[RMDB]
RNA sequence: GGGAACGACUCGAGUAGAGUCGAAAAUGAUGUAAAAAUGUUAUGAGGAUGUUUUUAUUAGAGGCUAAAAAAAAAUGUUUAUGCAAUGAUAAAACGAGUUAAGCAUUUUUUUUUAAGUUGCCGACUCUACAAUCAGUAGAUUCGUCUACUGAUUGUAAAAAGAAACAACAACAACAAC
Reactivity to DMS in 0.01 (KOAc 150mM, MgCl2 10mM, bicine 150mM(pH8.5), 24C), signal-to-noise 4, nucleotides 027 to 126: u040g000a110u030g010u010a020a030a020a060a050u000g010u010u000a080u040g000a140g010g000a030u000g000u000u010u000u000u020a010u010u020a100g000a200g000g010c020u010a000a000a000a000a000a000a000a010a020u010g000u000u000u010a010u050g010c040a060a120u020g000a140u020a060a060a070a080c150g000a160g010u000u000a010a010g010c000a000u000u000u000u000u000u000u000u000u000a020a120g010u020u010g000c040c010g000a100c100u010c060
Reactivity to 2A3 in 0.01 (KOAc 150mM, MgCl2 10mM, bicine 150mM(pH8.5), 24C), signal-to-noise 4, nucleotides 027 to 126: u080g040a010u090g000u090a030a020a080a090a010u050g020u060u100a180u300g060a040g130g020a050u040g030u040u020u000u020u010a090u050u090a050g010a020g060g000c010u030a010a000a000a000a000a000a000a000a020u020g010u010u000u020a060u100g040c040a130a050u080g080a090u190a150a130a030a040c050g030a040g140u030u010a010a000g000c000a000u010u010u000u000u000u000u010u000u030a080a050g050u060u090g020c010c000g030a020c010u020c010

Chemical mapping of a 177-nucleotide RNA with DMS and 2A3. It was measured as part of the RMDB libraries RFM100 and RFMREP. The reactions ran in a buffer of 150 mM KOAc, 10 mM MgCl2 and 150 mM bicine (pH 8.5), at 24 C.